[RMDB]
The record gives the reactivity of an RNA of 207 nucleotides to 2A3. For 2A3 the reverse transcriptase was SuperScript II with manganese. The reactions ran in a buffer of 150 mM KOAc, 10 mM MgCl2 and 150 mM bicine (pH 8.5), at 24 C. It was measured as part of the RMDB library OK3TST. The 2A3 profile rests on 517 reads.

RNA sequence: GGGAACGACUCGAGUAGAGUCGAAAAGUAAUAGAUAAGUGGAUGACGAGAAAGGGUGCGCUGAUAUCCACUACGAAGGCUAGCAGUAAAAAGAAUAGCGCUCCUUAUACAACUAGCUACAAAAGGAUAAGGUAUCGUGAUGUCAAUCACAUUGCGACCGUACGAUGGUAUUCGUACCAUCGUACGGAAAAGAAACAACAACAACAAC
Reactivity to 2A3 in 0.01 (KOAc 150mM, MgCl2 10mM, bicine 150mM(pH8.5), 24C), signal-to-noise 1, nucleotides 027 to 156: g060u170a000a140u060a060g020a050u080a060a000g000u000g050g030a090u080g070a060c080g050a020g180a120a060a020g030g000g020u040g010c090g000c010u000g000a040u010a000u190c000c050a010c070u060a010c030g110a070a000g060g000c000u060a000g030c000a030g130u090a100a020a030a020a000g090a070a050u030a060g000c030g000c000u000c060c000u010u030a120u000a010c000a010a000c060u040a000g100c030u000a060c100a040a130a050a000g060g000a060u140a100a100g090g000u020a060u020c020g000u020g020a000u000g070u060c060a090a150u040c000a010c000a000u000u090g040c020g000a000